[RMDB]
Source information
Structure probing data (DMS and 2A3) for a 177-nucleotide construct. For DMS the reverse transcriptase was MarathonRT.
RNA sequence: GGGAACGACUCGAGUAGAGUCGAAAACGAUCCAAGGCACGCCAAACCUCUGGAACCCACCCGAGAGGCAUUUCUCGUCAAUCUAUAUCGCACUGUGCAAGCCAGCAGUCGCCUUCCCGUCGUCGACGCGGUAAAUAGUGUUCGCACUAUUUACCGCAAAAGAAACAACAACAACAAC
Reactivity to DMS in 0.01 (KOAc 150mM, MgCl2 10mM, bicine 150mM(pH8.5), 24C), signal-to-noise 3, nucleotides 027 to 126: c120g010a070u020c010c070a130a110g000g060c040a060c070g040c010c060a040a120a120c060c030u000c050u000g000g000a080a080c040c050c070a160c090c010c020g020a050g000a090g000g000c190a060u000u010u000c040u000c040g000u020c070a020a090u060c100u000a120u020a070u020c100g000c030a080c040u000g000u010g000c100a080a130g000c020c010a080g000c080a060g000u000c070g010c060c030u010u010c030c010c010g010u020c070g010u010c040g000a140c130
Reactivity to 2A3 in 0.01 (KOAc 150mM, MgCl2 10mM, bicine 150mM(pH8.5), 24C), signal-to-noise 5, nucleotides 027 to 126: c020g050a030u000c020c010a050a040g020g000c040a010c080g030c030c030a080a060a050c020c010u040c040u020g010g030a060a060c000c010c000a020c000c020c000g100a030g010a020g060g010c040a040u050u150u030c040u010c010g090u030c030a030a110u040c060u090a100u030a040u170c050g040c030a040c030u050g050u070g080c030a040a030g010c020c000a010g030c020a010g040u030c020g010c010c000u020u030c010c000c000g030u050c030g040u020c030g020a040c050